[RMDB]
The record gives the reactivity of an RNA of 207 nucleotides to 2A3.
The reactions ran in a buffer of 150 mM KOAc, 10 mM MgCl2 and 150 mM bicine (pH 8.5), at 24 C.
2A3 is a SHAPE reagent: it acylates the 2'-hydroxyl of flexible nucleotides of all four kinds.
Source: RMDB library M2RFPK, as collected in RNAgym.
Reactivities are given for positions 27 through 156.
RNA sequence: GGGAACGACUCGAGUAGAGUCGAAAAUCCACUAUGAAUCUAGUCACUAAAGAAACACAAUUAGCUACUGUGUGUAAUAGUGAGUGUUGAUAACACAAAAUAAUAGUAUAGUUUUGGAAGAUUAUACGCGCCCUUGCUCCGUUCGCGGAGCAAGGAAGUGGAGCAGAAAGUUCGCUUUCUGCUCCACAAAAGAAACAACAACAACAAC
Reactivity to 2A3 in 0.01 (KOAc 150mM, MgCl2 10mM, bicine 150mM(pH8.5), 24C), signal-to-noise 2, nucleotides 027 to 156: u010c010c010a060c100u230a170u180g060a030a020u050c110u160a100g080u010c030a020c010u010a130a070a060g060a020a110a000c030a000c000a080a060u220u130a040g030c070u170a070c100u010g000u000g000u000g000u000a010a040u000a000g000u010g030a040g000u060g010u030u010g020a130u180a280a010c020a000c020a000a110a100a040u260a030a180u130a100g030u020a020u000a040g050u000u070u110u150g160g050a170a030g010a000u010u010a040u020a030c000g010c000g030c090c000c000u000u000g010c000u050c020c000g000u040u020c070g050c020g130g000a000g000c000a000a000g000g000a000a000